[RMDB]
RNA sequence: GGGAACGACUCGAGUAGAGUCGAAAAGAUAUGGACAUACCUGGGACAUGUCUAACACAAUCGGAAACGAUUGUGAGACAACAGCCCACAUGGUAUGUCCUAAGUCAAAUCGUCCUUCGGGACGAAAGUCUCCCACAUUGUUCGCAAUGUGGGAGACAAAAGAAACAACAACAACAAC
Reactivity to 2A3 in 0.01 (KOAc 150mM, MgCl2 10mM, bicine 150mM(pH8.5), 24C), signal-to-noise 2, nucleotides 027 to 126: g040a010u080a050u130g020g020a000c000a020u010a000c000c010u050g040g040g020a040c110a240u110g010u000c020u180a300a020c010a010c000a010a000u010c030g010g080a120a060a060c030g000a010u000u020g000u000g000a010g000a000c010a060a070c060a040g070c020c050c010a060c060a120u190g020g000u000a000u000g010u000c000c000u020a020a000g000u000c000a000a020a200u040c060g020u000c010c000u070u040c300g070g000g010a000c000g000a040a020a000
Reactivity to DMS in 0.01 (KOAc 150mM, MgCl2 10mM, bicine 150mM(pH8.5), 24C), signal-to-noise 2, nucleotides 027 to 126: g000a050u000a300u010g000g010a030c010a020u030a010c010c010u000g020g030g010a080c070a220u000g010u010c000u010a090a150c020a010c000a030a000u000c030g020g010a170a150a240c010g000a010u000u000g010u000g010a010g000a050c240a050a060c240a070g030c000c000c020a170c210a120u010g030g000u000a000u000g000u000c000c000u000a040a050g000u000c090a000a120a160u000c010g010u000c040c000u000u010c270g070g040g000a000c000g060a000a020a130